[RMDB]
RNA sequence: GGGAACGACUCGAGUAGAGUCGAAAACCGGGUCCGACUCGGGGGCCAUCAAGAGCGGAGACAACAAUCUGGAGGCGCUAUGUGCCAAUUACGUGCUUCCGCUGUACCGGGCCGACCCGGCGGUCGACGGUGAAAUGCCAUUCGUGGCAUUUCACCGAAAAGAAACAACAACAACAAC
Reactivity to 2A3 in 0.01 (KOAc 150mM, MgCl2 10mM, bicine 150mM(pH8.5), 24C), signal-to-noise 3, nucleotides 027 to 126: c000c000g000g030g000u030c070c040g030a120c080u040c010g000g000g010g100g030c060c020a160u120c080a110a100g020a000g140c000g010g040a010g020a080c010a130a030c010a000a110u050c080u140g130g020a110g100g090c080g000c100u090a130u300g030u140g050c000c020a040a080u100u090a090c050g030u020g060c030u120u060c030c000g000c020u000g020u030a020c040c000g000g000g000c010c030g040a070c000c000c000g000g000c030g020g050u040c020g030a060
Reactivity to DMS in 0.01 (KOAc 150mM, MgCl2 10mM, bicine 150mM(pH8.5), 24C), signal-to-noise 1, nucleotides 027 to 126: c060c000g010g000g000u090c010c050g070a090c000u000c000g050g000g010g000g070c080c030a070u070c140a110a130g050a010g050c040g000g000a000g000a010c030a000a080c060a110a140u020c250u060g040g050a270g000g000c020g000c050u020a090u000g010u000g050c130c020a070a140u100u000a020c270g000u030g000c000u000u000c010c000g000c000u000g000u090a160c150c300g000g000g000c060c040g070a080c060c060c000g040g000c080g050g000u010c020g000a100

Source: RMDB library OK1LIB, as collected in RNAgym. An RNA of 177 nucleotides, treated with 2A3 and DMS and read out base by base. The RNA was probed in 150 mM KOAc, 10 mM MgCl2 and 150 mM bicine (pH 8.5) at 24 C. For DMS, 959 sequencing reads were counted.